The record gives the reactivity of an RNA of 207 nucleotides to 2A3 and DMS. For DMS, 2,186 sequencing reads were counted. The data come from the RNA Mapping Database (RMDB), library OK3TST.

[RMDB]
RNA sequence: GGGAACGACUCGAGUAGAGUCGAAAAAUGAGAUGCAAGCACACAUAUUCCAUCUGGAGACUCUGUCCACCUCCACAGAAGCCAGGAGGUAAGUGGUGUAAGGGGAGUGCUUAGUAUAUUGGCACCUAAGGAGGGGUAUCUGCCAGGGAAGAUAUGAAUUAAUCGGAUACUUCGGUAUCCGAUUAAUAAAAGAAACAACAACAACAAC
Reactivity to 2A3 in 0.01 (KOAc 150mM, MgCl2 10mM, bicine 150mM(pH8.5), 24C), signal-to-noise 2, nucleotides 027 to 156: a010u170g000a060g020a030u040g040c040a020a020g050c020a040c000a000c000a050u040a120u150u110c060c050a060u050c070u090g040g010a070g010a050c010u000c010u130g100u030c020c010a030c000c120u000c020c010a030c010a030g100a110a020g050c060c040a040g010g060a030g050g000u020a050a020g010u060g070g010u020g010u090a050a070g000g010g020g040a060g010u020g000c000u060u020a030g040u030a060u030a040u150u090g050g000c040a020c040c060u040a010a010g000g020a020g000g000g000g030u020a030u030c040u040g130c030c030a000g030g020g000a020a050g030a030u160a060u170g080a050
Reactivity to DMS in 0.01 (KOAc 150mM, MgCl2 10mM, bicine 150mM(pH8.5), 24C), signal-to-noise 1, nucleotides 027 to 156: a130u000g010a090g030a050u000g010c120a080a120g000c060a030c030a090c090a100u010a160u000u010c000c000a110u010c030u000g000g010a180g040a100c050u020c030u000g000u000c050c070a140c090c000u000c010c040a160c030a100g000a120a160g040c030c030a120g050g010a050g000g000u000a020a080g040u000g000g040u010g010u020a120a130g020g010g050g000a120g010u000g030c020u000u000a090g000u010a110u000a120u010u010g000g020c000a060c070c050u020a080a090g000g020a300g000g030g010g000u000a030u000c020u000g000c030c010a000g000g000g010a090a060g030a080u000a060u010g000a150